[RMDB]
RNA sequence: GGGAACGACUCGAGUAGAGUCGAAAAACGUUCGUACGCGACCGAGGCGCGGCUAGGUCGACGGACCGAACAAUGGCAUCCCGCAUUCUGCCAUCCGCCGCGCAGCUUCUUCUCAAACGGUGCGGAAAAAAGUAGGACACCUUCGGGUGUCCUACAAGGAUAAACUUACGUUCGCGUAAGUUUAUCCAAAAGAAACAACAACAACAAC
Reactivity to DMS in 0.01 (KOAc 150mM, MgCl2 10mM, bicine 150mM(pH8.5), 24C), signal-to-noise 1, nucleotides 027 to 156: a070c040g000u000u010c050g020u000a060c060g060c010g010a070c030c020g000a160g030g000c030g030c040g000g000c020u000a110g000g000u010c010g000a170c180g000g020a030c000c010g010a120a070c210a140a040u010g000g000c000a110u010c030c020c060g000c090a170u000u000c050u000g060c010c000a060u000c020c100g000c000c020g040c030g040c010a000g010c050u000u020c080u000u000c070u000c070a110a070a110c050g010g050u000g030c000g010g040a000a090a070a110a110a110g030u000a010g000g000a080c010a010c000c010u000u070c300g000g020g020u000g000u000c000c000u000a000c000a010a070
Reactivity to 2A3 in 0.01 (KOAc 150mM, MgCl2 10mM, bicine 150mM(pH8.5), 24C), signal-to-noise 3, nucleotides 027 to 156: a010c020g010u000u030c020g010u050a040c160g020c030g090a030c030c020g030a090g050g000c000g000c000g010g000c000u000a010g000g000u010c030g180a140c150g100g020a000c000c000g000a010a010c000a020a010u000g010g000c000a020u090c060c030c000g000c010a060u300u110c010u030g010c000c000a010u020c020c030g000c000c010g030c030g000c000a010g010c020u140u080c000u100u040c040u040c040a070a090a040c040g010g010u000g000c010g000g000a050a080a000a000a000a000g000u000a000g000g000a000c000a000c000c000u030u090c160g060g000g000u000g000u000c000c000u000a000c000a000a000